[RMDB]
RNA sequence: GGGAACGACUCGAGUAGAGUCGAAAAACACACUGAUCCACCGCGGUUGCCGAUCUCGGGGGAGAUGCGCCACGCCCACGUGGGCUAGUCCGGAGUUGGGGGCAAGCCGCCUCUGAGCACGACGAGAGGCUCGUUUCGCGUUCGCGCGAGGCGAGCCAAAAGAAACAACAACAACAAC
Reactivity to DMS in 0.01 (KOAc 150mM, MgCl2 10mM, bicine 150mM(pH8.5), 24C), signal-to-noise 3, nucleotides 027 to 126: a080c060a140c100a070c100u030g000a030u010c010c010a040c040c040g060c040g000g000u010u000g010c040c030g000a110u000c020u000c030g010g020g000g000g000a100g000a070u020g000c040g010c020c040a040c060g000c020c050c080a100c120g010u000g010g010g000c060u020a110g000u000c020c000g000g010a080g030u020u010g030g000g020g000g010c000a060a050g020c080c050g030c030c020u000c010u000g000a080g010c060a070c030g010a030c110g030a060g010a290
Reactivity to 2A3 in 0.01 (KOAc 150mM, MgCl2 10mM, bicine 150mM(pH8.5), 24C), signal-to-noise 5, nucleotides 027 to 126: a000c060a000c000a020c030u070g050a070u020c010c000a030c000c000g030c010g020g040u020u070g060c030c030g050a070u010c020u020c030g060g000g000g030g000a090g020a050u090g020c050g070c010c000a020c010g030c010c030c010a110c070g030u100g010g010g000c020u020a020g070u050c040c010g030g020a100g030u120u080g050g030g020g020g000c020a040a010g120c020c010g010c000c010u010c020u040g040a020g050c030a010c070g070a000c020g050a040g010a030